[RMDB]
RNA sequence: GGGAACGACUCGAGUAGAGUCGAAAAGAUAUGGAGGAGGCUUUUGACGAUCUAGUGUUCGGAAACGAACACGGAUCGAUAAGCCUCUCCUAAGUCAAAGGUGUCCCUCGUUCGCGAGGGACACCAAGAGUAUCUGUAUCUUCGGAUACAGAUACUCAAAAGAAACAACAACAACAAC
Reactivity to DMS in 0.01 (KOAc 150mM, MgCl2 10mM, bicine 150mM(pH8.5), 24C), signal-to-noise 3, nucleotides 027 to 126: g030a060u000a300u010g000g000a040g000g000a020g010g020c000u010u000u010u010g020a220c130g010a000u000c000u000a100g030u000g010u010u000c000g000g000a090a090a200c000g020a010a000c000a010c000g000g010a010u000c000g010a030u000a010a020g010c000c000u000c000u000c000c000u010a030a180g000u010c010a060a120a110g000g020u000g000u000c010c000c000u000c000g010u010u000c180g020c010g010a010g000g000g010a000c000a000c000c010a000a010
Reactivity to 2A3 in 0.01 (KOAc 150mM, MgCl2 10mM, bicine 150mM(pH8.5), 24C), signal-to-noise 4, nucleotides 027 to 126: g020a020u110a050u200g020g010a100g190g140a040g010g020c040u080u120u150u180g290a140c040g000a010u000c010u100a250g010u000g000u010u000c010g020g050a080a070a070c020g000a000a010c000a000c010g000g000a000u000c000g000a000u010a010a010g000c000c000u010c000u000c000c000u020a090a030g050u040c060a110a030a120g020g000u000g000u000c000c030c000u000c020g030u050u050c290g000c000g100a000g020g010g000a010c000a000c000c000a000a000